[RMDB]
About this RNA:
This 177-nucleotide RNA was probed chemically with 2A3 and DMS. The DMS profile rests on 1,352 reads. For 2A3, 4,823 sequencing reads were counted. The RNA was probed in 150 mM KOAc, 10 mM MgCl2 and 150 mM bicine (pH 8.5) at 24 C.

RNA sequence: GGGAACGACUCGAGUAGAGUCGAAAAGCCGUAAGCUUCGGCUUACGGCAAAGCUGACCAGCUUUGAGGUCAUACAUCGUCAUAGCACAAAAAUAAAAAUAAAAAGUGCUGUCUUCGGACAGCACAACAACAUUGUUACGUUCGCGUAACAAUGUUGAAAAGAAACAACAACAACAAC
Reactivity to 2A3 in 0.01 (KOAc 150mM, MgCl2 10mM, bicine 150mM(pH8.5), 24C), signal-to-noise 4, nucleotides 027 to 126: g010c000c000g000u000a000a000g010c020u040u190c300g070g000c000u030u000a000c000g010g020c000a010a020a000g040c010u020g000a010c010c020a020g000c000u040u030u040g030a010g000g000u030c010a020u140a150c050a100u160c120g050u010c010a020u030a030g000c050a010c040a060a100a070a080a010u260a060a090a050a040a020u250a050a090a030a050a010g000u000g020c010u000g000u000c000u000u050c190g060g010a000c000a000g000c000a000c000a010a000
Reactivity to DMS in 0.01 (KOAc 150mM, MgCl2 10mM, bicine 150mM(pH8.5), 24C), signal-to-noise 2, nucleotides 027 to 126: g010c010c000g000u000a000a010g020c000u000u020c150g050g000c010u000u000a000c010g000g000c010a000a010a060g010c150u030g040a020c060c050a210g000c020u000u000u000g030a040g060g010u000c000a070u000a110c130a030u010c100g010u010c040a050u000a050g010c020a170c170a000a070a050a070a020u030a040a030a070a080a050u010a050a080a060a100a110g030u000g000c000u000g000u010c000u000u010c150g020g000a000c000a000g030c000a010c010a030a070

Record summary:
Values cover nucleotides 27 to 126.